The data come from the RNA Mapping Database (RMDB), library M2RFPK.
An RNA of 207 nucleotides, treated with 2A3 and DMS and read out base by base.
The reactions ran in a buffer of 150 mM KOAc, 10 mM MgCl2 and 150 mM bicine (pH 8.5), at 24 C.
Reactivities are rounded to 0.1 and cut off at 0 and 3.

[RMDB]
RNA sequence: GGGAACGACUCGAGUAGAGUCGAAAAAUACGUACUGACACCGGUUGCUCAACAGGCUGUGUGGGACAAUAGAAUAACAAGGCUGUCAAUUUGAGCUUGACGGCUGCAAACCGAAUGGAGUGAAAUCGUAACCGGACUCACUUCGGUGAGUCCGGAAGAUGCAGCAUAGUUUCGACUAUGCUGCAUCAAAAGAAACAACAACAACAAC
Reactivity to 2A3 in 0.01 (KOAc 150mM, MgCl2 10mM, bicine 150mM(pH8.5), 24C), signal-to-noise 2, nucleotides 027 to 156: a000u060a040c080g010u010a110c020u050g090a050c010a040c060c020g020g020u040u040g030c030u050c060a070a060c000a080g050g000c050u050g120u030g020u050g070g000g040a010c010a020a070u070a090g080a120a030u110a100a080c070a180a000g030g000c020u010g000u040c000a000a000u040u100u190g050a040g040c010u010u020g000a000c020g000g000c050u040g000c020a040a040a050c000c090g070a030a040u150g040g000a020g040u100g050a060a040a070u160c050g020u040a060a040c000c000g000g000a000c000u020c000a000c000u020u060c090g040g000u000g000a010g000u000c010c000g010g000a000a000
Reactivity to DMS in 0.01 (KOAc 150mM, MgCl2 10mM, bicine 150mM(pH8.5), 24C), signal-to-noise 1, nucleotides 027 to 156: a020u000a010c000g030u000a080c050u020g010a090c020a050c020c000g010g000u000u000g060c010u030c040a130a170c040a080g060g030c000u010g020u000g000u030g020g000g000a150c090a080a160u000a110g010a140a080u010a150a150c110a110a240g030g030c040u000g010u000c010a020a060u000u000u000g040a120g010c300u000u000g010a090c000g040g000c000u000g010c090a070a100a090c100c030g010a060a150u010g010g030a150g040u010g010a050a050a110u010c040g030u000a080a150c010c000g010g040a040c000u000c000a050c040u020u010c230g030g030u000g000a040g000u000c010c010g070g000a010a040